[RMDB]
RNA sequence: GGGAACGACUCGAGUAGAGUCGAAAACGGAGGAACGGGCGGGUGAAGGGAUUUUUAUGGCCUUCCAGUACCCGGUAGAAAUCCCCGGCGUCAGUAACCAGUUUUUCCUGCAAACCGCGCUGAAUGCACUACGUAGUCGAUUCGUCGACUACGUAGUAAAAGAAACAACAACAACAAC
Reactivity to DMS in 0.01 (KOAc 150mM, MgCl2 10mM, bicine 150mM(pH8.5), 24C), signal-to-noise 3, nucleotides 027 to 126: c030g050g000a010g020g020a060a070c030g010g010g010c060g000g020g030u030g000a060a030g000g000g010a040u000u000u010u030u010a010u050g000g000c040c020u020u010c080c050a150g030u010a100c050c010c050g010g000u010a040g000a080a050a040u000c010c010c000c030g000g010c030g020u000c020a020g000u010a040a120c090c020a020g000u000u020u000u000u020c040c010u000g010c110a040a110a160c070c060g020c080g010c020u010g000a050a100u050g040c090
Reactivity to 2A3 in 0.01 (KOAc 150mM, MgCl2 10mM, bicine 150mM(pH8.5), 24C), signal-to-noise 4, nucleotides 027 to 126: c020g000g060a040g040g020a100a050c030g010g040g030c070g000g060g070u200g060a060a060g060g000g040a020u000u030u000u040u140a170u130g050g050c010c000u070u110c020c010a010g020u080a100c000c000c010g000g020u040a030g040a020a090a040u020c020c010c000c000g010g000c000g020u040c000a040g020u020a060a010c010c010a020g010u000u000u000u100u060c000c000u000g010c030a070a090a090c030c020g000c010g000c070u060g070a190a060u140g040c020
Annotation: Chemical mapping of a 177-nucleotide RNA with DMS and 2A3. The data come from the RNA Mapping Database (RMDB), library OK1LIB. For DMS, 5,019 sequencing reads were counted. The reactions ran in a buffer of 150 mM KOAc, 10 mM MgCl2 and 150 mM bicine (pH 8.5), at 24 C.